Structure probing data (2A3 and DMS) for a 177-nucleotide construct.
The data come from the RNA Mapping Database (RMDB), library OK2TST.
For DMS the reverse transcriptase was MarathonRT.
2A3 adducts were read by reverse transcription with SuperScript II with manganese.
For DMS, 28,411 sequencing reads were counted.
The reactions ran in a buffer of 150 mM KOAc, 10 mM MgCl2 and 150 mM bicine (pH 8.5), at 24 C.
[RMDB]
RNA sequence: GGGAACGACUCGAGUAGAGUCGAAAAGUGCAAGAUGGCUCCAGGAUUCAUAUAUGGCAAUGCUUUGAUCUAUUCUCAAUAACAGCUCAAAGGUGAAUGCCUGUCUAUAUGGACAGUGCCUAAAUCAAUUCUAAUUCCUAUUCGUAGGAAUUAGAAUAAAAGAAACAACAACAACAAC
Reactivity to 2A3 in 0.01 (KOAc 150mM, MgCl2 10mM, bicine 150mM(pH8.5), 24C), signal-to-noise 9, nucleotides 027 to 126: g050u050g050c030a010a040g040a140u070g030g000c010u000c040c030a050g060g050a130u060u050c020a010u060a010u030a050u160g010g000c020a030a050u080g040c000u040u020u020g010a010u000c010u010a070u120u070c120u020c050a080a110u170a150a060c040a030g020c000u010c050a030a030a010g060g030u110g090a120a060u070g010c010c000u010g010u000c020u050a180u020a050u210g020g000a000c010a010g040u060g060c000c010u060a080a070a030u090c060a020
Reactivity to DMS in 0.01 (KOAc 150mM, MgCl2 10mM, bicine 150mM(pH8.5), 24C), signal-to-noise 9, nucleotides 027 to 126: g010u000g010c090a070a080g000a110u010g010g010c020u000c040c060a090g000g000a140u000u000c030a040u000a060u010a060u010g000g010c020a050a090u010g010c010u000u000u010g010a020u000c030u000a070u000u000c180u010c190a100a100u010a060a050c080a030g010c090u000c030a020a030a040g010g010u000g010a110a100u000g010c020c010u000g010u010c090u000a080u010a040u000g010g000a020c040a120g010u000g020c010c040u000a040a060a080u010c110a080